[RMDB]
RNA sequence: GGGAACGACUCGAGUAGAGUCGAAAAAAUUGUGAUAUCUCUAGUGCAAAGAGUAUCGUCGAUUGUGUCAAUUCGACAUCGUUGGAUUCGAUGUAUUCAGCGCAGGUUGACACAACUUUAUGGCCGAACGUAGCUAAAUAUUCGUAUUUAGCUACGUAAAAGAAACAACAACAACAAC
Reactivity to DMS in 0.01 (KOAc 150mM, MgCl2 10mM, bicine 150mM(pH8.5), 24C), signal-to-noise 9, nucleotides 027 to 126: a060a060u010u000g020u010g010a020u000a020u010c010u000c010u000a120g020u010g020c240a120a110a040g010a020g020u000a010u000c010g020u000c110g010a120u000u000g010u000g000u000c000a010a020u000u010c060g020a120c180a060u010c010g020u000u000g010g010a070u000u010c200g010a140u010g010u000a040u000u000c050a020g010c040g020c220a090g000g010u000u000g000a020c010a000c010a020a030c130u000u000u000a080u000g010g010c030c050g010a110
Reactivity to 2A3 in 0.01 (KOAc 150mM, MgCl2 10mM, bicine 150mM(pH8.5), 24C), signal-to-noise 9, nucleotides 027 to 126: a000a010u200u150g040u050g010a030u040a100u070c030u000c010u030a110g120u110g280c080a160a130a010g020a010g010u020a020u030c040g070u040c060g080a170u020u040g010u010g000u000c010a010a010u190u290c030g070a030c050a110u150c040g010u010u020g050g020a040u110u050c100g050a060u200g050u140a040u030u040c010a010g030c030g000c080a060g020g010u000u010g000a010c000a000c000a000a010c000u050u110u080a150u220g110g010c020c020g020a020